[RMDB]
RNA sequence: GGGAACGACUCGAGUAGAGUCGAAAAGUGUUGCCGUGCUGGAUGACAUGCCUCAACUGUGGAGCGAGUCAGACUGGCCACGCACCGUAGCUGUUGCUCCGUACACGCUGGACCGUGUGGAUCCAGACAUCCCUCGCACUUUCGAGUGCGAGGGAUGAAAAGAAACAACAACAACAAC
Reactivity to DMS in 0.01 (KOAc 150mM, MgCl2 10mM, bicine 150mM(pH8.5), 24C), signal-to-noise 1, nucleotides 027 to 126: g000u000g010u010u000g000c020c050g000u000g000c020u000g010g010a210u000g010a060c010a070u010g020c110c040u000c030a060a120c120u000g020u000g030g010a050g000c030g010a120g030u000c020a040g000a150c080u000g000g000c000c040a020c040g010c030a020c080c000g020u020a070g010c030u000g000u000u010g000c020u010c030c010g030u000a070c120a030c110g010c020u000g010g010a060c070c060g010u000g030u000g010g010a130u000c000c000a070g000a240
Reactivity to 2A3 in 0.01 (KOAc 150mM, MgCl2 10mM, bicine 150mM(pH8.5), 24C), signal-to-noise 1, nucleotides 027 to 126: g060u050g100u060u090g120c130c000g040u080g020c000u070g030g030a110u060g010a000c010a030u060g070c030c020u030c000a130a080c060u220g070u130g230g000a080g060c050g020a010g050u110c000a000g060a180c000u110g050g060c000c030a000c000g000c010a010c030c010g020u020a030g000c010u040g100u300u230g030c000u000c000c030g000u060a000c050a000c020g000c010u030g010g000a030c020c100g080u050g000u160g220g000a150u080c010c000a000g060a010
An RNA of 177 nucleotides, treated with DMS and 2A3 and read out base by base. 2A3 adducts were read by reverse transcription with SuperScript II with manganese. The 2A3 profile rests on 697 reads. High DMS reactivity at an A or C suggests that its Watson-Crick edge is free. DMS adducts were read by reverse transcription with MarathonRT. The DMS profile rests on 1,074 reads. Source: RMDB library OK2TST, as collected in RNAgym. High 2A3 reactivity points to a flexible backbone, as in loops and unpaired stretches.